[RMDB]
RNA sequence: GGGAACGACUCGAGUAGAGUCGAAAAAAUAGAAGGGUUAAUCUAAUCCUAACAGUGUCAGGCUGGAUGGUUGGUAACGAAGAUGAUGUUAGAUUGCCAUUUUCUACGGUGGACCCUGUUGAAGGUGGACCUUAGGUUCUUUCGAGAACCUAAGGUCAAAAGAAACAACAACAACAAC
Reactivity to DMS in 0.01 (KOAc 150mM, MgCl2 10mM, bicine 150mM(pH8.5), 24C), signal-to-noise 1, nucleotides 027 to 126: a060a090u010a020g000a100a090g030g020g000u000u010a070a070u000c040u000a050a040u000c020c000u010a080a110c060a050g020u000g020u040c100a080g040g000c040u000g020g000a040u000g000g050u000u000g000g000u010a110a070c110g010a120a120g020a120u000g020a050u010g000u000u000a030g000a070u010u000g010c020c000a020u030u010u000u000c040u000a040c140g000g020u020g020g000a070c070c040c020u000g010u000u020g010a040a140g020g010u010g010